[RMDB]
RNA sequence: GGGAACGACUCGAGUAGAGUCGAAAAGUUCGCGGGCUGCGUGUCAUGAUAUCGUCAACGGCAAGGGCCGAAAGAUUGCGGCUCAGAUUGCGCGAAAUGUCGCCGUCCGUGACGAUACCGGCAAGUAACGAGUACUAGGAUUCGUCCUAGUACUCGUAAAAGAAACAACAACAACAAC
Reactivity to DMS in 0.01 (KOAc 150mM, MgCl2 10mM, bicine 150mM(pH8.5), 24C), signal-to-noise 5, nucleotides 027 to 126: g020u010u000c030g020c050g020g010g010c050u000g000c040g010u000g000u010c040a060u020g020a100u010a050u000c010g010u000c020a050a080c030g010g000c210a190a140g000g000g010c000c010g010a040a080a110g010a210u010u010g010c010g010g000c000u000c010a100g000a200u000u000g010c130g010c020g000a050a110a070u010g000u000c020g010c010c050g000u000c010c020g010u000g010a010c020g000a050u000a040c030c010g000g000c120a040a070g010u010a060
Reactivity to 2A3 in 0.01 (KOAc 150mM, MgCl2 10mM, bicine 150mM(pH8.5), 24C), signal-to-noise 5, nucleotides 027 to 126: g080u100u100c040g000c030g060g030g010c040u070g000c020g050u060g050u050c020a040u090g120a100u040a040u110c020g030u000c020a080a050c040g030g020c060a110a280g040g000g010c010c010g020a030a060a020g260a050u140u300g080c010g000g000c010u010c020a030g090a170u070u160g010c070g000c000g070a060a050a120u200g050u070c010g010c010c010g020u000c000c000g000u000g000a000c010g000a000u010a030c000c010g010g040c070a080a030g040u040a080